[RMDB]
RNA sequence: GGGAACGACUCGAGUAGAGUCGAAAAUGGGCUGAAUAAAAAGGAGAAAGUGGGCUGAGCACCAGCGUCCAUCGCCUGCUUUCUGAAGCUGGAUGCUACUUCAUACGCCCUCCGUGAAGCCUCAAUACGAUUUUACCAUGUUCGCAUGGUAAAAUCGAAAAGAAACAACAACAACAAC
Reactivity to 2A3 in 0.01 (KOAc 150mM, MgCl2 10mM, bicine 150mM(pH8.5), 24C), signal-to-noise 1, nucleotides 027 to 126: u080g000g010g000c010u040g110a080a060u180a070a100a010a020a020g130g010a030g030a020a030a000g030u040g030g050g000c040u080g030a010g000c030a010c080c040a000g010c010g040u030c040c020a060u090c030g000c030c030u080g040c020u020u050u030c020u050g050a030a000g000c030u050g040g050a060u080g020c000u080a140c020u010u080c040a030u020a090c030g030c000c020c040u000c000c000g020u080g080a000a030g010c040c010u010c040a070a030u090a120
Reactivity to DMS in 0.01 (KOAc 150mM, MgCl2 10mM, bicine 150mM(pH8.5), 24C), signal-to-noise 2, nucleotides 027 to 126: u000g020g000g000c020u000g000a110a110u010a040a090a090a130a130g010g010a070g030a030a060a030g060u000g000g000g020c020u020g030a070g010c080a090c030c040a080g010c080g000u000c080c100a130u000c120g030c030c020u000g000c030u000u000u000c070u010g010a020a050g000c010u000g000g010a130u000g000c050u000a070c040u010u000c020a070u000a070c050g010c120c040c000u000c030c010g000u010g010a110a060g020c050c010u000c140a050a080u000a140
Overview
The data come from the RNA Mapping Database (RMDB), library OK2TST. The record gives the reactivity of an RNA of 177 nucleotides to 2A3 and DMS. 2A3 adducts were read by reverse transcription with SuperScript II with manganese. The 2A3 profile rests on 1,569 reads. The RNA was probed in 150 mM KOAc, 10 mM MgCl2 and 150 mM bicine (pH 8.5) at 24 C.